RNA sequence: GGGAACGACUCGAGUAGAGUCGAAAAACUUUGAAUGCUUCCUCCUAAGACUGAGCCGUAUUGGAGGUGUAAUACAGGAUACCCUCCCUGUUCAAAACUACAAGACCAAAGAAGGUUGGGAUUUCCAUUCUCAAUUCAUUCUCUAUUGUUUGGAGCAAUUACGGAUUUAGUUCGCUAAAUCCGUAAUAAAAGAAACAACAACAACAAC
Reactivity to 2A3 in 0.01 (KOAc 150mM, MgCl2 10mM, bicine 150mM(pH8.5), 24C), signal-to-noise 4, nucleotides 027 to 156: a000c070u130u110u230g050a100a030u090g030c010u200u130c010c010u040c000c010u090a180a050g050a110c080u070g050a020g120c070c020g030u090a110u160u100g010g000a020g000g000u040g030u110a080a090u160a060c050a030g080g030a040u100a140c010c000c000u020c020c010c000u010g000u060u040c020a020a080a020a030c020u140a110c040a100a040g060a110c040c020a110a050a050g040a030a030g020g000u010u010g020g010g030a030u160u110u020c060c050a050u120u020c040u000c010a030a060u130u080c040a100u100u050c060u010c010u070a140u110u080g030u060u040u050g070g030a040g050c030a020
Reactivity to DMS in 0.01 (KOAc 150mM, MgCl2 10mM, bicine 150mM(pH8.5), 24C), signal-to-noise 2, nucleotides 027 to 156: a050c060u020u010u000g010a080a080u000g030c040u010u010c000c040u000c050c020u000a070a090g000a140c090u000g020a060g020c020c050g000u010a120u000u000g010g020a050g000g000u010g030u000a050a140u000a170c070a150g010g000a280u000a070c040c010c010u000c040c010c160u010g000u000u000c080a050a060a060a130c070u010a050c060a060a060g040a090c060c050a070a050a100g000a100a060g000g010u000u000g030g010g010a130u000u000u000c180c050a100u000u000c010u000c000a060a000u000u000c010a110u000u000c020u000c050u010a080u000u000g020u000u000u010g000g000a100g040c100a090
This 207-nucleotide RNA was probed chemically with 2A3 and DMS. For DMS, 2,840 sequencing reads were counted. The reactions ran in a buffer of 150 mM KOAc, 10 mM MgCl2 and 150 mM bicine (pH 8.5), at 24 C.